The record gives the reactivity of an RNA of 207 nucleotides to 2A3. It was measured as part of the RMDB library RNAMAK. 2A3 adducts were read by reverse transcription with SuperScript II with manganese. Values cover nucleotides 27 to 156.
RNA sequence: GGGAACGACUCGAGUAGAGUCGAAAAUACAUUUCGAUGUAUCCUAAGGGGUCGGAUCGCGAUUGUCUGCCUUUUGACGAGCUGAAGCCUCCACGGCUCGAUAAGGAACUACAGACGCGAUCCGACGGAGGCACCCUCUCAAUCCAUUCGUGGAUAACUUAAGGUGUCUCUUCGGAGACACCUUAAGAAAAGAAACAACAACAACAAC
Reactivity to 2A3 in 0.01 (KOAc 150mM, MgCl2 10mM, bicine 150mM(pH8.5), 24C), signal-to-noise 1, nucleotides 027 to 156: u060a010c030a040u110u100u180c250g070a040u000g000u000a030u100c000c040u140a200a160g190g000g020g020u000c000g000g000a000u000c000g000c010g130a120u080u300g060u060c000u040g080c020c030u060u120u100u170g240a090c040g000a000g000c010u030g030a100a040g010c000c000u000c010c000a050c020g000g000c000u020c010g060a040u110a080a050g000g020a080a090c090u160a130c280a000g020a040c020g020c010g000a000u000c000c000g000a000c000g010g010a000g000g040c000a010c000c010c000u020c020u030c080a030a020u020c000c010a030u040u150c240g200u090g000g020a010u160a100a070
About this RNA
For 2A3, 825 sequencing reads were counted.